[RMDB]
Conditions: 150 mM KOAc, 10 mM MgCl2 and 150 mM bicine (pH 8.5), 24 C. An RNA of 207 nucleotides, treated with 2A3 and read out base by base.

RNA sequence: GGGAACGACUCGAGUAGAGUCGAAAACGCGAUGGAUACGUCCAUCGCGAAUCCGUCCAAGCCGCGGACGUUAAACUGUGGCACGGUUGUGCCUAGGUGCAACCCUGCUGCACAUGGCGGCACCCCUGCCCAAGCUACCGUCUACGGACGGUAGCAAGGUAGUUUUAAAUUUCGAUUUAAAACUACCAAAAGAAACAACAACAACAAC
Reactivity to 2A3 in 0.01 (KOAc 150mM, MgCl2 10mM, bicine 150mM(pH8.5), 24C), signal-to-noise 4, nucleotides 027 to 156: c010g010c000g000a000u010g000g000a010u020a050c190g120u020c000c000a000u010c010g000c000g000a000a000u030c010c010g000u010c000c000a070a020g010c000c000g000c000g000g000a000c000g010u010u020a010a010a030c040u030g010u020g000g010c000a000c000g020g000u010u010g000u010g020c030c040u110a220g130g000u000g000c000a000a010c000c010c000u010g000c000u010g010c000a060c030a110u130g050g000c000g000g010c000a100c000c010c000c020u070g030c030c030c030a060a020g000c000u000a000c000c000g000u000c010u030a040c290g110g000a000c000g000g010u000a000g000c000a000a000